[RMDB]
RNA sequence: GGGAACGACUCGAGUAGAGUCGAAAAGAUAUGGACGGUGAUUGCAUCGUACUAGGUCGAUAAGUCCCACUCGGAAACGAGUGAGGACUUUUGACGACCGAAUACGAUGCAAUCACCGUCCUAAGUCCAAUCUAACUUGGUUCGCCAAGUUAGAUUGAAAAGAAACAACAACAACAAC
Reactivity to DMS in 0.01 (KOAc 150mM, MgCl2 10mM, bicine 150mM(pH8.5), 24C), signal-to-noise 4, nucleotides 027 to 126: g000a100u010a300u010g000g010a020c000g020g010u000g000a010u000u000g000c000a000u000c000g020u010a000c010u000a300g010g030u000c000g010a170u000a020a010g010u000c000c000c010a020c000u000c000g000g000a170a120a170c010g010a020g010u000g000a110g020g010a010c000u000u000u000u010g010a230c160g000a010c000c000g000a120a120u000a000c000g010a010u000g000c000a010a000u000c000a010c000c000g000u000c000c000u000a010a070g010u000c040